RNA sequence: GGGAACGACUCGAGUAGAGUCGAAAAUUCUCAGCACUCAUCAAGAAGUAGGCUUAGGCCAAUUGCUUGGUGGUGAAAGUAGAGGGAAGGUAGCACUUCGACGCCUCUAAGUACUCUGUGGGAGUAGAAAACUGGACAUCGUUCGCGAUGUCCAGAAGUAACAAAAUCGGUUCGCCGAUUUUGUUACAAAAGAAACAACAACAACAAC
Reactivity to 2A3 in 0.01 (KOAc 150mM, MgCl2 10mM, bicine 150mM(pH8.5), 24C), signal-to-noise 5, nucleotides 027 to 156: u040u010c020u000c010a010g030c000a000c040u260c010a020u010c010a000a010g020a080a040g050u090a040g030g000c010u070u060a100g150g020c020c010a040a080u040u050g010c000u000u000g000g000u000g010g000u000g020a070a030a000g070u070a000g010a020g020g030g020a010a040g040g000u060a020g040c030a030c090u020u020c030g100a080c070g110c010c000u000c000u010a020a030g040u020a010c010u000c030u060g120u290g140g090g020a020g010u050a030g120a040a080a030a030c000u000g000g000a000c000a000u000c000g040u040u010c080g020c010g130a000u010g000u000c000c000a000g000a000a000
Reactivity to DMS in 0.01 (KOAc 150mM, MgCl2 10mM, bicine 150mM(pH8.5), 24C), signal-to-noise 2, nucleotides 027 to 156: u000u000c010u000c010a150g010c000a030c020u000c000a010u000c000a010a020g010a020a020g030u000a120g020g040c010u000u000a200g090g050c010c000a040a110u010u000g000c000u000u010g020g050u000g020g010u010g010a060a070a150g020u000a030g010a060g020g010g000a130a080g010g010u000a130g000c110a170c050u000u010c050g020a080c040g000c000c000u010c010u010a070a140g000u000a040c010u010c030u000g040u000g030g000g010a040g020u010a050g000a090a060a120a170c010u000g000g010a040c000a010u000c000g040u000u000c300g020c000g010a020u000g030u000c000c000a000g000a000a080